[RMDB]
RNA sequence: GGGAACGACUCGAGUAGAGUCGAAAAGGAAGUGGCUUCGGCCACUUCCACACAAGGCUGCGGUCGCAGCCUUGAACCCGCGGUACCUGAUCCGGCCACGGCUAACUUGUUUUCUUCGGAAAACAAGCAUCUACUACCGAUUCGUCGGUAGUAGAUGAAAAGAAACAACAACAACAAC
Reactivity to 2A3 in 0.01 (KOAc 150mM, MgCl2 10mM, bicine 150mM(pH8.5), 24C), signal-to-noise 3, nucleotides 027 to 126: g000g000a010a000g000u020g010g020c050u110u140c300g050g020c010c000a000c010u000u020c000c000a000c000a000c010a000a000g010g000c020u010g050c060g220g300u300c270g000c010a000g000c020c000u000u000g000a000a000c010c000c000g000c030g020g010u080a100c000c020u070g020a080u050c040c010g000g000c000c020a030c020g050g000c050u080a100a030c000u030u010g010u000u030u010u000c000u010u050c180g100g020a000a000a000a000c000a010a000g000
Reactivity to DMS in 0.01 (KOAc 150mM, MgCl2 10mM, bicine 150mM(pH8.5), 24C), signal-to-noise 3, nucleotides 027 to 126: g020g010a010a000g010u010g010g010c000u010u000c200g030g010c010c010a010c010u010u000c000c000a040c210a100c010a010a010g020g000c000u000g030c000g030g010u020c230g000c000a020g000c010c000u010u000g010a060a130c110c000c000g010c060g000g030u010a050c020c010u000g010a130u000c200c220g000g000c010c020a050c010g010g010c130u000a060a230c000u010u000g010u000u010u000u000c000u000u000c200g020g000a020a000a010a000c010a000a010g000
The data come from the RNA Mapping Database (RMDB), library RFMREP. An RNA of 177 nucleotides, treated with 2A3 and DMS and read out base by base. For 2A3 the reverse transcriptase was SuperScript II with manganese. Conditions: 150 mM KOAc, 10 mM MgCl2 and 150 mM bicine (pH 8.5), 24 C. Values cover nucleotides 27 to 126. For DMS, 2,531 sequencing reads were counted.